An RNA of 177 nucleotides, treated with DMS and 2A3 and read out base by base. For DMS the reverse transcriptase was MarathonRT. Reactivities are given for positions 27 through 126. The reactions ran in a buffer of 150 mM KOAc, 10 mM MgCl2 and 150 mM bicine (pH 8.5), at 24 C. The 2A3 profile rests on 7,619 reads. It was measured as part of the RMDB library TTRDES.
RNA sequence: GGGAACGACUCGAGUAGAGUCGAAAAGAUAUGGACUCACCGAAGGAGCUCUGUAUCGGAAACGAUACUGAGCGCGAAACUUCAUGAGUCCUAAGUCAAAAGUUGGCAUACUUCGGUAUGCCAACAAGUCUUAGUCUACGUUCGCGUAGACUAAGACAAAAGAAACAACAACAACAAC
Reactivity to DMS in 0.01 (KOAc 150mM, MgCl2 10mM, bicine 150mM(pH8.5), 24C), signal-to-noise 3, nucleotides 027 to 126: g010a000u000a010u010g000g000a030c010u000c000a020c300c210g020a020a010g010g010a060g020c010u000c000u010g000u000a000u000c010g010g000a000a000a000c010g010a020u000a000c010u000g010a020g030c000g040c230g000a130a020a060c000u000u000c000a140u010g000a010g000u000c000c000u000a000a080g010u000c000a130a070a080a120g000u000u000g020g010c000a020u000a000c000u000u040c170g050g010u000a000u000g000c010c000a000a000c000a040a100
Reactivity to 2A3 in 0.01 (KOAc 150mM, MgCl2 10mM, bicine 150mM(pH8.5), 24C), signal-to-noise 2, nucleotides 027 to 126: g000a010u020a000u010g010g000a000c010u010c020a050c110c300g010a010a010g040g100a040g000c000u010c010u010g020u000a010u000c000g010g020a010a000a000c000g010a000u000a000c010u070g000a000g010c000g030c020g180a300a090a030c000u000u010c000a020u020g010a000g010u030c000c000u020a010a010g000u020c000a050a010a000a210g010u010u000g010g030c000a010u000a010c000u020u040c080g140g000u010a010u000g010c000c000a000a000c000a000a000